[RMDB]
RNA sequence: GGGAACGACUCGAGUAGAGUCGAAAAUGGCGUAAGGUGAGGAUUGGAAGACCCGGACGUUCUGCACUGGGGUGACAAAAAUCGGUAAGUGUCACCUGACGCGUGAGUCUUAACGAAUCUUGAGAGGUUAUAGUAGCAGGACAUGUUUGUUCGGCUCGAGGAAUGAUAGUUUCGACUAUCAUUCCUCAAAAGAAACAACAACAACAAC
Reactivity to DMS in 0.01 (KOAc 150mM, MgCl2 10mM, bicine 150mM(pH8.5), 24C), signal-to-noise 2, nucleotides 027 to 156: u000g010g030c020g050u020a040a070g020g040u000g000a090g010g000a080u010u000g020g000a160a140g000a100c020c020c000g000g000a070c040g000u020u000c030u000g010c020a060c070u010g020g020g000g040u000g000a120c040a030a070a050a070a130u010c070g030g000u000a090a150g030u020g000u000c010a000c010c020u000g000a050c060g000c080g050u000g000a070g030u000c050u000u010a040a080c050g010a100a060u000c030u010u000g000a130g010a080g010g010u000u010a060u010a100g020u000a060g000c020a050g000g000a020c040a250u000g000u000u000u010g000u000u000c020g030g040c070u000c060
Reactivity to 2A3 in 0.01 (KOAc 150mM, MgCl2 10mM, bicine 150mM(pH8.5), 24C), signal-to-noise 3, nucleotides 027 to 156: u080g070g000c020g000u050a040a070g000g020u020g020a020g020g020a080u060u120g050g020a050a030g040a040c000c020c020g040g020a020c040g050u050u020c020u060g010c050a020c070u060g080g000g000g000u010g010a000c020a020a150a010a010a030u140c090g040g070u180a110a060g040u040g020u020c000a000c000c000u020g030a030c080g000c010g000u040g030a010g040u000c000u030u030a040a060c050g020a070a060u030c040u110u130g020a070g010a000g050g030u060u030a060u050a080g070u050a020g000c030a000g020g010a020c010a050u100g060u120u120u070g050u020u010c020g010g010c070u060c100